RNA sequence: GGGAACGACUCGAGUAGAGUCGAAAAUUCAAUGACUUCGGAUGCGGCGCUGGCUUUCUGGAGCUGGGCUUGAAGGGUUAAUCGCUCGAAGAUGGCUGAGUCCAGUUUGGGGAUGUGCUGAGUGGAGGUUAGGAGAUAACUUCGGUUAUCUCCUAACAAAAGAAACAACAACAACAAC
Reactivity to DMS in 0.01 (KOAc 150mM, MgCl2 10mM, bicine 150mM(pH8.5), 24C), signal-to-noise 4, nucleotides 027 to 126: u000u000c070a110a100u010g010a100c060u000u000c060g010g020a090u010g020c030g010g020c060g030c050u000g010g000c030u000u000u010c040u010g010g000a060g030c020u000g010g020g020c020u010u010g000a130a150g000g010g000u000u000a090a090u000c180g000c020u000c060g010a060a120g010a080u000g000g000c040u000g000a080g020u010c020c010a050g010u000u000u000g010g010g010g010a070u010g000u010g010c030u000g000a100g020u000g000g000a100g000
Reactivity to 2A3 in 0.01 (KOAc 150mM, MgCl2 10mM, bicine 150mM(pH8.5), 24C), signal-to-noise 1, nucleotides 027 to 126: u080u030c020a000a100u120g030a070c030u050u040c050g050g050a030u080g120c030g000g000c050g000c060u040g060g060c010u170u170u000c060u070g050g020a030g000c000u040g040g060g000c020u030u020g050a110a000g060g010g000u040u060a120a020u130c040g020c060u010c050g120a070a030g020a080u050g000g070c010u080g080a020g000u060c000c020a030g000u010u080u110g000g000g000g000a020u020g040u050g060c050u070g030a020g000u140g000g060a060g030